[RMDB]
RNA sequence: GGGAACGACUCGAGUAGAGUCGAAAAGGCUGUCCGCGAAGCCUUGCGGCAGUAGAGCCCAGGUAAUUUGCUGAGCCUGAUGGGUGUCAGGGUCAGUCCAAGUGAAAGCAAAGAGAGGCUGGGAUGAAGGGUGCAAAGGAAUAGUAAAGAAAGCAUACCUUUUAAUAGCUUUCGAGCUAUUAAAAGGAAAAGAAACAACAACAACAAC
Reactivity to DMS in 0.01 (KOAc 150mM, MgCl2 10mM, bicine 150mM(pH8.5), 24C), signal-to-noise 2, nucleotides 027 to 156: g050g030c000u000g020u000c040c040g000c010g020a040a170g040c110c060u010u010g030c050g010g010c010a060g010u000a070g020a170g010c000c020c000a160g010g030u000a060a080u010u000u000g040c000u010g010a080g050c010c000u020g000a060u000g000g030g010u010g030u020c010a050g020g000g000u000c010a020g010u000c070c030a060a110g000u000g010a140a080a110g010c050a100a080a130g020a070g000a050g030g020c000u000g020g000g010a100u000g010a050a100g000g040g010u010g000c080a050a030a070g000g000a080a050u000a050g040u010a040a110a070g030a030a060a050g040c040a130u000a130
Reactivity to 2A3 in 0.01 (KOAc 150mM, MgCl2 10mM, bicine 150mM(pH8.5), 24C), signal-to-noise 2, nucleotides 027 to 156: g110g000c020u020g070u160c030c000g020c040g040a070a050g090c030c040u040u130g010c010g000g000c000a010g000u060a020g020a030g050c020c000c000a000g080g000u100a060a180u080u050u140g000c020u000g010a060g020c010c000u010g010a050u070g060g180g120u300g020u050c010a000g020g030g030u010c000a000g000u000c040c040a090a020g040u080g150a110a050a010g070c080a070a120a020g040a020g000a010g030g000c030u020g030g010g000a020u050g040a030a030g030g010g010u040g030c050a050a080a010g010g020a010a020u030a030g010u080a140a110a030g010a010a020a000g000c000a010u070a110